Record summary: An RNA of 207 nucleotides, treated with 2A3 and read out base by base.
[RMDB]
RNA sequence: GGGAACGACUCGAGUAGAGUCGAAAAUCAGGUUGUAGUGAGCUGAGAUCGUACCAGUGCACUCCAGCUUGUGUGAUAGAGUGAGACUGUGUCUCAAAAUAACAGUAAUAAUCAUUGUCAUCAUCAUCAUCAUCUGACUGGAUCACAUCUGGGGAAGCUCUAUUUGGUCCUUCGGGACCAAAUAGAGAAAAGAAACAACAACAACAAC
Reactivity to 2A3 in 0.01 (KOAc 150mM, MgCl2 10mM, bicine 150mM(pH8.5), 24C), signal-to-noise 2, nucleotides 027 to 156: u090c010a030g000g110u010u000g030u050a110g000u040g140a070g050c010u070g070a000g000a250u170c040g020u090a070c000c030a020g010u000g050c010a020c020u000c020c000a000g000c020u060u010g020u010g000u000g070a050u110a140g120a000g070u080g010a020g000a000c030u090g060u050g030u300c090u100c270a090a050a010a000u110a050a000c080a020g130u190a020a180u130a240a000u150c040a060u030u110g100u040c040a070u000c010a010u000c000a020u000c000a000u210c020a060u000c000u120g040a250c020u010g090g070a060u120c050a000c020a040u110c050u000g000g010g030g020a030a020g000

Conditions: 150 mM KOAc, 10 mM MgCl2 and 150 mM bicine (pH 8.5), 24 C. It was measured as part of the RMDB library OK3TST. For 2A3, 803 sequencing reads were counted.